[RMDB]
RNA sequence: GGGAACGACUCGAGUAGAGUCGAAAAGUAAUACCAUUUUAAAAUCAUUGGGAUUUACGUCACUAAAUGGAUCUCCUGUUUCAUUGCGGUAUGGAUCUAUACCAAAAGAAUUAAUAAAUAAACAUCCCACUGACGGUCUCUUCGGAGACCGUCAGUGAAAAGAAACAACAACAACAAC
Reactivity to 2A3 in 0.01 (KOAc 150mM, MgCl2 10mM, bicine 150mM(pH8.5), 24C), signal-to-noise 1, nucleotides 027 to 126: g000u000a000a000u020a090c000c000a050u000u030u140u080a210a230a000a000u160c220a090u020u090g080g080g060a000u130u000u070a160c160g030u160c200a070c300u270a000a210a150u110g000g000a000u000c000u110c020c000u140g100u000u020u240c300a220u220u000g000c000g000g000u000a000u110g000g000a000u070c000u000a070u040a130c000c000a000a300a000a000g070a130a000u180u110a240a070u040a090a000a150u160a040a130a020c070a050u030c040c000